[RMDB]
RNA sequence: GGGAACGACUCGAGUAGAGUCGAAAAAAAGUAAAGCUAAGUUUGAACAAUACAGAUUAGUUUUGGAUGUACUGAUUCAAAUGAAAGAUUGUAUUGACCGCGAUGAUACUUAUACUACAGUACUGGAAGUCACUUAGAUCUUCGGAUCUAAGUGACUAAAAGAAACAACAACAACAAC
Reactivity to DMS in 0.01 (KOAc 150mM, MgCl2 10mM, bicine 150mM(pH8.5), 24C), signal-to-noise 1, nucleotides 027 to 126: a090a090a030g010u000a030a000a050g020c070u000a040a130g010u020u000u000g010a080a100c010a070a000u000a040c010a030g010a100u000u000a070g020u010u000u000u010g000g000a110u010g000u010a090c120u000g000a040u010u000c000a010a020a030u040g000a060a130a150g000a060u010u000g000u000a030u000u020g030a100c230c110g010c080g020a040u000g000a170u000a070c040u000u000a120u030a100c020u000a070c070a060g010u010a040c090u000g000g000a120